[RMDB]
RNA sequence: GGGAACGACUCGAGUAGAGUCGAAAAGACGGAAAAGAUCGAACCUAAGAAGAUGAGGAAGUGGGAGCCGAAUCCUAGGGCUCCUAGGGACGCAUCGUCCGAUGCGAAAUAAACACCAACGUCGAAACCCUAUGACUCGAUUCGUCGAGUCAUAGGGAAAAGAAACAACAACAACAAC
Reactivity to DMS in 0.01 (KOAc 150mM, MgCl2 10mM, bicine 150mM(pH8.5), 24C), signal-to-noise 2, nucleotides 027 to 126: g000a020c020g000g000a030a050a070a090g020a000u000c010g000a070a110c060c010u000a120a030g000a160a100g030a050u000g000a060g000g000a070a210g010u010g000g000g000a000g030c000c020g050a070a120u000c090c080u000a030g000g030g000c010u010c000c000u000a000g000g000g000a300c060g020c040a050u000c060g000u000c110c110g070a080u010g010c130g010a010a100a060u020a030a040a050c080a110c070c030a000a170c140g010u000c090g020a100a180a220
Reactivity to 2A3 in 0.01 (KOAc 150mM, MgCl2 10mM, bicine 150mM(pH8.5), 24C), signal-to-noise 2, nucleotides 027 to 126: g000a000c000g000g090a000a100a000a030g090a090u210c060g000a030a050c040c010u040a070a080g070a030a050g000a080u100g030a040g010g060a200a090g060u060g080g000g000a060g050c040c090g020a030a050u050c040c040u050a030g060g000g000c000u010c000c000u000a000g000g020g000a020c000g000c030a000u110c050g160u080c070c000g000a000u000g000c000g060a140a030a000u230a030a020a000c060a020c080c000a070a040c000g010u050c010g000a040a050a040

This 177-nucleotide RNA was probed chemically with DMS and 2A3. For 2A3 the reverse transcriptase was SuperScript II with manganese. It was measured as part of the RMDB library OK1LIB. The DMS profile rests on 1,639 reads. The RNA was probed in 150 mM KOAc, 10 mM MgCl2 and 150 mM bicine (pH 8.5) at 24 C.